[RMDB]
RNA sequence: GGGAACGACUCGAGUAGAGUCGAAAAUGAUGGAUGGCGAGGCUAAUUCUAAAAGAAGCAGCCGUAGCGAAAGCGAUUACUCGCACAGCAAUGGAGGAGUAACGUAAUAAAUGCGUUUAGUCAUCUGUCCACUGAUAGGUUUCGACCUAUCAGUGGAAAAAGAAACAACAACAACAAC
Reactivity to DMS in 0.01 (KOAc 150mM, MgCl2 10mM, bicine 150mM(pH8.5), 24C), signal-to-noise 6, nucleotides 027 to 126: u050g010a070u010g010g020a030u000g000g000c010g000a090g020g010c000u000a090a260u000u000c000u000a100a070a110a210g010a030a020g010c300a020g000c000c010g020u020a170g010c000g000a080a130a180g000c010g010a180u000u000a010c010u010c010g020c100a300c010a020g000c300a100a100u000g000g010a290g010g000a010g010u000a000a010c020g000u000a020a080u050a060a080a080u030g010c010g020u000u010u010a060g010u020c000a010u000c010u000g000
Reactivity to 2A3 in 0.01 (KOAc 150mM, MgCl2 10mM, bicine 150mM(pH8.5), 24C), signal-to-noise 6, nucleotides 027 to 126: u170g030a030u110g010g000a000u010g000g000c010g020a070g000g000c020u010a030a050u010u000c030u060a070a100a090a080g010a000a000g030c030a000g000c000c000g000u010a000g000c010g030a030a030a010g010c010g060a040u000u000a010c010u010c010g080c040a040c010a030g040c060a040a240u100g030g060a100g020g000a000g020u000a010a000c000g020u020a060a030u070a070a180a030u240g010c020g010u090u110u070a010g000u000c000a000u000c010u000g020

Conditions: 150 mM KOAc, 10 mM MgCl2 and 150 mM bicine (pH 8.5), 24 C. Chemical mapping of a 177-nucleotide RNA with DMS and 2A3. It was measured as part of the RMDB libraries RFM100 and RFMREP. 2A3 adducts were read by reverse transcription with SuperScript II with manganese.